[RMDB]
RNA sequence: GGGAACGACUCGAGUAGAGUCGAAAAUACACCGUGUAUUCCGGUAUUCUCAUCAGAGCUGUACCAGAACUCUGUGUGCGGUGUGAGAGAUAAACUGACAGGUUUUGUAGAUAGCUCAAAGACCACCGUGUAGCCGUUAAUUCGUUAACGGCUACACAAAAGAAACAACAACAACAAC
Reactivity to 2A3 in 0.01 (KOAc 150mM, MgCl2 10mM, bicine 150mM(pH8.5), 24C), signal-to-noise 2, nucleotides 027 to 126: u080a010c020a000c010c020g010u020g000u080a250u050u110c080c000g000g020u000a060u030u020c000u000c020a180u150c070a040g000a010g000c030u060g020u080a060c010c010a000g000a080a020c010u040c060u280g060u030g050u080g130c090g050g000u010g010u070g030a090g000a000g000a070u140a140a150a000c010u040g070a020c020a080g070g020u060u070u000u040g050u010a050g020a280u080a010g040c000u010c030a030a050a060g040a040c020c050a020c070c050
Reactivity to DMS in 0.01 (KOAc 150mM, MgCl2 10mM, bicine 150mM(pH8.5), 24C), signal-to-noise 2, nucleotides 027 to 126: u010a080c100a070c040c040g000u010g000u000a150u000u000c050c030g000g020u000a050u000u000c010u000c030a130u020c220a120g010a010g020c090u000g010u000a050c090c030a040g000a030a060c070u000c060u000g000u010g000u000g010c050g020g010u000g020u010g020a130g000a090g000a120u000a010a050a070c050u010g010a080c100a080g000g010u010u000u010u000g010u000a140g000a100u000a060g020c010u000c030a070a110a090g010a090c160c030a070c160c150